[RMDB]
RNA sequence: GGGAACGACUCGAGUAGAGUCGAAAAAGGACUGAAACGUCUGAUGGAGUCUGCGAAAUAAAGCAGAAGUAGACGGAAUGAGAUCUCUAUCGAGAAUAAUGAAGUCCGAAUAGUGGAAAACACUUAAGGGUAUAGUUAACUUCGGUUAACUAUACCCAAAAGAAACAACAACAACAAC
Reactivity to DMS in 0.01 (KOAc 150mM, MgCl2 10mM, bicine 150mM(pH8.5), 24C), signal-to-noise 4, nucleotides 027 to 126: a090g000g000a020c010u010g000a100a060a020c030g000u000c000u020g010a090u040g020g020a140g010u000c000u000g010c000g000a090a120a140u040a120a110a210g020c010a000g000a030a090g000u030a020g010a000c010g000g000a100a080u040g010a130g010a070u000c000u000c000u050a130u020c180g010a020g000a040a030u020a100a060u000g010a300a030g010u000c000c000g010a080a080u010a050g010u000g010g010a090a060a120a110c090a030c010u000u010a070a300
Reactivity to 2A3 in 0.01 (KOAc 150mM, MgCl2 10mM, bicine 150mM(pH8.5), 24C), signal-to-noise 4, nucleotides 027 to 126: a000g000g000a020c000u010g030a050a140a000c000g010u000c020u040g130a120u130g110g030a100g140u000c000u010g010c000g060a080a180a280u200a090a210a030g000c000a000g000a040a030g070u030a050g010a030c020g030g120a040a110u220g050a070g040a090u040c020u000c010u080a170u190c220g060a030g080a090a100u220a080a000u050g100a000a000g000u000c010c000g000a090a090u070a080g000u030g070g030a090a040a090a020c010a020c000u050u040a130a100